[RMDB]
RNA sequence: GGGAACGACUCGAGUAGAGUCGAAAAGGUAAUGGACGACGGCGGUGUGUGGCGAACAGGGAUACCGGUAGUCAGUGUCUGGAACAUCCCAAGGGGCGGCGGAGCUAGCACCCCGACACGUUAAGGCAAAACUUCGCACGGUUCGCCGUGCGAAGAAGUAUUGAAGCACGUUCGCGUGCUUCAAUACAAAAGAAACAACAACAACAAC
Reactivity to 2A3 in 0.01 (KOAc 150mM, MgCl2 10mM, bicine 150mM(pH8.5), 24C), signal-to-noise 1, nucleotides 027 to 156: g030g020u060a080a000u100g040g000a010c010g000a000c030g050g000c040g000g070u020g000u010g000u050g040g010c000g030a120a120c090a120g000g020g010a020u040a080c040c010g030g060u070a020g040u090c090a030g030u000g030u060c010u060g020g020a050a010c010a060u020c040c000c010a050a070g040g000g000g000c030g070g000c050g050g050a030g050c020u040a010g020c030a080c000c000c020c000g010a040c010a010c060g000u060u200a030a040g030g030c030a030a030a080a000c010u000u010c000g000c000a000c000g000g000u060u070c210g000c140c000g000u020g010c000g000a000a000g000a000a000
This 207-nucleotide RNA was probed chemically with 2A3. The 2A3 profile rests on 1,049 reads. The RNA was probed in 150 mM KOAc, 10 mM MgCl2 and 150 mM bicine (pH 8.5) at 24 C.